Structure probing data (DMS) for a 177-nucleotide construct.

RNA sequence: GGGAACGACUCGAGUAGAGUCGAAAAGAUAUGGAAAUAUUGCCUUCUCUGCUGGCACGCAACAGCGUAUGGGUCGGAAACGACCCUACGACAUGCGUGCAGCAGAGAAGGCAAUAUUUCCUAAGUCGUAUUCUGUAAGGUUCGCCUUACAGAAUACAAAAGAAACAACAACAACAAC
Reactivity to DMS in 0.01 (KOAc 150mM, MgCl2 10mM, bicine 150mM(pH8.5), 24C), signal-to-noise 2, nucleotides 027 to 126: g010a120u010a300u000g000g010a020a040a010u000a000u000u010g010c020c000u000u000c000u000c000u000g010c000u010g020g040c000a010c010g000c000a060a090c300a250g000c020g030u000a020u020g030g020g030u010c000g000g010a130a140a220c020g000a020c000c010c000u000a000c000g030a050c130a160u000g010c000g000u000g010c010a030g000c000a000g000a030g000a010a000g000g010c000a000a000u000a000u000u000u000c010c000u010a010a080g000u000c120
For DMS, 3,389 sequencing reads were counted. Values cover nucleotides 27 to 126.